[RMDB]
RNA sequence: GGGAACGACUCGAGUAGAGUCGAAAACAAUCGAAGCAGUGAACUUAAGCCCCAGUAAACGGCGGCCGUAACUAUAACGGUCCUAAGGUAGCGAAAUUCCUUGUCGGGUAAGUUCCGACCCGCACGAGACUGACUAUCACUUCGGUGAUAGUCAGUCAAAAGAAACAACAACAACAAC
Reactivity to 2A3 in 0.01 (KOAc 150mM, MgCl2 10mM, bicine 150mM(pH8.5), 24C), signal-to-noise 2, nucleotides 027 to 126: c000a000a050u120c030g070a040a000g030c130a070g050u020g180a040a020c030u040u020a100a000g000c000c000c000c000a070g100u160a020a150a070c120g050g000c000g030g000c000c000g020u020a030a040c060u110a080u060a300a020c000g000g020u010c000c000u060a090a050g020g000u000a010g030c030g060a050a060a110u030u000c000c000u070u100g040u030c000g010g000g000u040a140a120g040u070u000c000c000g030a020c000c020c010g010c030a020c050g000a000
Reactivity to DMS in 0.01 (KOAc 150mM, MgCl2 10mM, bicine 150mM(pH8.5), 24C), signal-to-noise 1, nucleotides 027 to 126: c160a080a070u000c000g010a040a040g060c080a150g000u000g000a060a090c000u020u000a160a120g000c000c030c000c040a140g080u000a070a070a050c240g000g000c060g000g040c040c000g020u030a040a020c190u000a200u090a210a070c000g000g040u000c000c040u030a080a000g100g000u000a000g000c140g000a040a040a040u000u000c000c020u000u110g000u000c030g000g000g020u000a060a080g000u000u000c000c020g000a020c000c000c000g020c020a020c190g060a120